The record gives the reactivity of an RNA of 177 nucleotides to 2A3 and DMS. 2A3 adducts were read by reverse transcription with SuperScript II with manganese. Values cover nucleotides 27 to 126. The DMS profile rests on 4,410 reads.

[RMDB]
RNA sequence: GGGAACGACUCGAGUAGAGUCGAAAAAGCGUCAUUAGUGAGCUCCUUAGUUUUCGCAGGCUAUUUUUGAACAGGGCUCCAACGACGACCGGUAGUUACGAAACCCUAGAAGCACGCGUGGACACGCGGAUAUACCCGUCUUCGGACGGGUAUAUCCAAAAGAAACAACAACAACAAC
Reactivity to 2A3 in 0.01 (KOAc 150mM, MgCl2 10mM, bicine 150mM(pH8.5), 24C), signal-to-noise 4, nucleotides 027 to 126: a020g030c010g020u020c030a070u050u140a090g080u080g200a000g020c030u200c030c030u090u070a040g020u040u040u010u130c080g000c040a020g040g050c030u050a100u130u200u070u140u270g050a080a040c020a050g000g000g000c000u010c010c020a030a000c050g000a000c000g010a010c000c000g020g050u090a090g050u060u100a030c040g040a050a050a080c000c010c000u030a050g020a140a000g030c020a010c070g010c030g030u040g040g100a030c010a000c130g050c010
Reactivity to DMS in 0.01 (KOAc 150mM, MgCl2 10mM, bicine 150mM(pH8.5), 24C), signal-to-noise 5, nucleotides 027 to 126: a060g000c020g010u000c020a090u010u000a090g020u000g000a020g000c010u000c010c040u000u010a050g010u000u000u010u000c280g010c210a110g000g000c040u010a020u010u010u010u000u010g020a080a120c240a070g000g000g000c010u000c010c020a060a050c110g010a020c010g020a120c060c030g000g010u010a060g000u000u000a070c070g000a110a090a110c010c010c020u000a120g000a100a080g010c070a040c060g010c020g010u000g000g000a120c110a050c080g030c150